[RMDB]
RNA sequence: GGGAACGACUCGAGUAGAGUCGAAAAAAAUUGAGACGGAGAUCCUUGUUAUAAUUAUCGAACGCUUAUGUCGAUGAAUUAUUGGCAUCUUUGGGUCUGUAAAUUAUUAAUUUUUGGGUGUACUUGAAUAAUACUGGUGGUUCGCCACCAGUAUUAUAAAAGAAACAACAACAACAAC
Reactivity to DMS in 0.01 (KOAc 150mM, MgCl2 10mM, bicine 150mM(pH8.5), 24C), signal-to-noise 1, nucleotides 027 to 126: a020a020a000u000u000g000a020g000a150c270g000g000a050g000a010u010c020c010u000u010g000u000u000a020u000a010a010u000u000a050u000c000g010a040a040c090g040c300u020u010a050u020g020u000c020g000a010u010g010a030a000u000u000a020u000u010g020g000c060a070u000c140u010u010u000g030g040g010u000c000u010g000u020a050a030a090u010u010a130u000u000a040a010u010u010u010u000u010g010g010g000u000g000u000a100c050u010u000g010a140
Description
This 177-nucleotide RNA was probed chemically with DMS. DMS adducts were read by reverse transcription with MarathonRT.